[RMDB]
RNA sequence: GGGAACGACUCGAGUAGAGUCGAAAAGAUAUGGAUGAAGACAUGAACUAUGUGACGAAUGAUGUUUGAAAUCGGAAACGAUUUCAAACAUCACUAUCACAUAUGUUCAACAGCUUCAUCCUAAGUCCUUUUACUCUGUCUUCGGACAGAGUAAAAGAAAAGAAACAACAACAACAAC
Reactivity to DMS in 0.01 (KOAc 150mM, MgCl2 10mM, bicine 150mM(pH8.5), 24C), signal-to-noise 2, nucleotides 027 to 126: g000a080u000a300u020g000g000a020u000g000a040a010g020a050c090a270u000g000a000a000c010u000a000u000g000u000g010a040c190g000a080a040u000g010a020u000g000u000u000u000g000a000a000a010u010c000g030g000a090a130a300c010g010a000u000u010u000c000a000a010a010c030a000u000c000a000c050u010a260u000c000a010c000a000u000a010u020g000u000u000c010a010a080c300a110g000c010u000u000c000a000u000c000c010u010a050a100g000u000c030
Reactivity to 2A3 in 0.01 (KOAc 150mM, MgCl2 10mM, bicine 150mM(pH8.5), 24C), signal-to-noise 1, nucleotides 027 to 126: g000a060u120a070u300g010g020a010u000g010a010a010g000a050c040a130u090g000a000a010c020u000a000u010g040u000g000a040c100g000a300a300u020g000a010u010g010u000u020u070g030a010a000a010u000c030g000g050a000a180a020c030g030a000u030u010u020c000a020a000a000c000a010u030c000a000c000u030a000u020c000a000c000a000u050a050u300g020u000u010c020a000a010c020a020g030c000u000u000c020a000u000c000c000u000a050a010g030u010c000